An RNA of 207 nucleotides, treated with 2A3 and read out base by base. The RNA was probed in 150 mM KOAc, 10 mM MgCl2 and 150 mM bicine (pH 8.5) at 24 C. The data come from the RNA Mapping Database (RMDB), library RNAMAK.

RNA sequence: GGGAACGACUCGAGUAGAGUCGAAAACAGUGGCCUUCGGGCCACUGAAAAAGCGUACUACGAUGAGGAUGGCACUCAUAGACAGUUUCCCAAAUAGGAAAUCGAGAGUGCAUCUCCCCACCAUCGUAUCGCAAAAAUGAGGCCUUCGGGCCUCAAACCUCCAAAUCGUAUUCGUACGAUUUGGAGGAAAAGAAACAACAACAACAAC
Reactivity to 2A3 in 0.01 (KOAc 150mM, MgCl2 10mM, bicine 150mM(pH8.5), 24C), signal-to-noise 2, nucleotides 027 to 156: c000a010g030u030g000g010c010c010u030u050c300g160g000g000c010c000a020c010u020g000a000a000a000a000a000g010c000g030u080a070c070u000a000c010g010a000u020g020a010g030g030a010u110g200g040c000a000c000u020c020a100u130a130g070a020c110a070g050u020u040u050c000c040c000a180a240a060u300a100g010g000a040a000a000u090c010g060a040g000a000g180u010g000c000a020u020c000u030c010c040c000c010a040c010c000a000u000c000g000u000a040u300c010g030c020a000a000a110a000a000u060g000a000g000g010c010c010u040u040c110g090g020g000c000c010u030c000a030a000a030
Reactivities are given for positions 27 through 156.